Background:
Structure probing data (DMS) for a 177-nucleotide construct. It was measured as part of the RMDB library VIROID. The reactions ran in a buffer of 150 mM KOAc, 10 mM MgCl2 and 150 mM bicine (pH 8.5), at 24 C. DMS adducts were read by reverse transcription with MarathonRT. For DMS, 1,040 sequencing reads were counted.
[RMDB]
RNA sequence: GGGAACGACUCGAGUAGAGUCGAAAAGAGAGGGGAUGAAUGGCAAAGAGCAUUGGAACGCCGAGGGGAUAUCUCCCAAGAAGGAAAAAAGGAAAAAGAGUCGGAAGCUUUCCCCAUAACGCUGGAGCCAACCUAUAAGGUUCGCCUUAUAGGUUGGAAAAGAAACAACAACAACAAC
Reactivity to DMS in 0.01 (KOAc 150mM, MgCl2 10mM, bicine 150mM(pH8.5), 24C), signal-to-noise 2, nucleotides 027 to 126: g000a080g010a110g010g030g010g000a030u000g000a100a030u000g020g010c050a040a080a070g000a100g000c040a140u000u000g010g030a080a120c180g040c110c040g000a100g000g040g010g020a110u010a080u000c080u000c000c000c020a060a050g000a060a070g000g010a020a030a020a040a100a080g000g000a030a020a060a100a090g000a050g010u000c030g020g010a050a100g000c070u000u010u000c020c000c020c110a040u010a070a110c120g010c030u010g010g010a210g010